An RNA of 177 nucleotides, treated with 2A3 and DMS and read out base by base. The reactions ran in a buffer of 150 mM KOAc, 10 mM MgCl2 and 150 mM bicine (pH 8.5), at 24 C. It was measured as part of the RMDB library OK1LIB. Reactivities are given for positions 27 through 126. The DMS profile rests on 1,695 reads.
RNA sequence: GGGAACGACUCGAGUAGAGUCGAAAAUUUAUUUCUACCCAUCCAGUUUUUAACACAUCUAAAACUUCUACUUCAUCACCAUUAUUUAGAUAUCCUAUAACAGAAGCUUCUAUUGUAGCAUCAUUUCCGUAUUAUGAUGCUUCGGCAUCAUAAUACGAAAAGAAACAACAACAACAAC
Reactivity to 2A3 in 0.01 (KOAc 150mM, MgCl2 10mM, bicine 150mM(pH8.5), 24C), signal-to-noise 7, nucleotides 027 to 126: u010u030u030a070u010u150u000c020u050a110c020c010c000a020u050c030c010a030g050u030u000u020u050u240a130a050c070a010c030a120u100c070u140a020a030a070a120c020u080u040c020u020a100c010u050u030c040a050u060c020a060c040c020a080u060u050a140u080u230u070a050g040a050u060a060u080c020c050u100a090u040a230a050c050a060g100a120a020g060c020u100u000c050u100a180u160u140g050u070a020g040c010a040u060c030a050u080u060u080c040
Reactivity to DMS in 0.01 (KOAc 150mM, MgCl2 10mM, bicine 150mM(pH8.5), 24C), signal-to-noise 2, nucleotides 027 to 126: u010u000u040a060u090u030u020c040u030a050c000c050c000a080u020c110c150a020g000u000u000u020u010u010a070a030c230a010c130a200u050c050u020a090a030a080a050c060u010u020c060u010a090c120u030u000c060a080u010c030a030c040c010a070u090u010a030u030u010u030a080g030a100u040a090u000c050c010u030a010u000a060a100c190a110g040a110a150g000c020u030u000c080u020a150u000u000g000u040a030g020c030a060u010c070a040u010u000u050c050